Background
The data come from the RNA Mapping Database (RMDB), library RFMREP. An RNA of 177 nucleotides, treated with DMS and 2A3 and read out base by base. For DMS the reverse transcriptase was MarathonRT. The DMS profile rests on 1,194 reads. 2A3 adducts were read by reverse transcription with SuperScript II with manganese. In probing experiments dimethyl sulfate is read out at A N1 and C N3, which are open when not base-paired.
RNA sequence: GGGAACGACUCGAGUAGAGUCGAAAAGAUCUUGCUUUCGUAAUAAAAUUCUGUACAUAAAAGUCGAAAGUAUUGCUAUAGUUAAGGUUGCGCUUGCCUAUUUAGGCAUACUUCUCAGGAUGGCGCGCCUAGUGGUAACCUUCGGGUUACCACUAGGAAAAGAAACAACAACAACAAC
Reactivity to DMS in 0.01 (KOAc 150mM, MgCl2 10mM, bicine 150mM(pH8.5), 24C), signal-to-noise 2, nucleotides 027 to 126: g000a050u010c020u000u000g000c000u000u000u000c060g030u000a030a020u030a040a110a070a150u000u010c060u020g060u000a060c060a060u010a040a060a200a190g010u000c020g000a010a030a030g030u000a000u000u000g010c050u000a050u000a030g010u000u010a030a050g010g020u000u000g010c020g010c020u000u000g020c000c000u000a300u010u010u020a030g040g000c000a050u000a010c070u000u000c020u000c030a220g000g000a070u030g010g010c000g010c040g020
Reactivity to 2A3 in 0.01 (KOAc 150mM, MgCl2 10mM, bicine 150mM(pH8.5), 24C), signal-to-noise 2, nucleotides 027 to 126: g060a070u050c010u040u000g000c000u000u000u000c010g000u010a020a000u040a010a170a030a020u050u100c060u150g090u090a030c000a070u200a200a040a060a000g000u000c010g020a070a020a000g050u000a020u000u070g000c000u000a000u020a130g070u150u210a060a010g050g050u070u140g010c020g030c000u030u120g070c000c000u130a270u070u190u250a020g010g000c000a010u000a010c000u070u000c020u000c020a020g070g020a070u150g020g020c000g000c000g000